[RMDB]
This 177-nucleotide RNA was probed chemically with 2A3 and DMS. Reactivities are given for positions 27 through 126.
RNA sequence: GGGAACGACUCGAGUAGAGUCGAAAAGAGGGCCUCUACCUAGAGCAUCCAUGCUCGUUUCACUAAGCCACUCGAUGUUUUUCUAUGACCAUGAUUUCGAUGUCAGUGAAUGGAUGUUAUACAAGAACGUAUGACUCGGUUUCGACCGAGUCAUACGAAAAGAAACAACAACAACAAC
Reactivity to 2A3 in 0.01 (KOAc 150mM, MgCl2 10mM, bicine 150mM(pH8.5), 24C), signal-to-noise 1, nucleotides 027 to 126: g070a040g030g050g010c060c030u040c060u070a040c040c020u050a070g000a000g110c000a000u000c000c000a030u080g080c030u050c110g040u010u060u020c000a030c020u120a180a000g050c030c040a120c070u000c000g000a060u050g080u050u000u000u020u050c100u130a150u180g060a030c030c030a080u140g010a010u040u080u220c100g030a020u150g050u080c040a000g020u000g110a060a050u050g030g000a010u050g040u110u080a100u090a100c030a030a010g050a180a010
Reactivity to DMS in 0.01 (KOAc 150mM, MgCl2 10mM, bicine 150mM(pH8.5), 24C), signal-to-noise 2, nucleotides 027 to 126: g000a060g010g020g000c130c010u000c040u000a090c100c060u000a080g000a040g000c020a030u000c030c030a030u020g030c080u000c060g010u000u000u010c030a040c030u000a130a090g010c100c030a020c060u000c060g010a080u010g010u020u000u010u000u000c060u010a100u010g010a040c060c050a070u010g010a080u000u000u000c030g000a040u040g020u000c040a110g010u000g000a060a040u020g020g010a080u000g000u000u000a100u010a120c160a080a130g000a040a130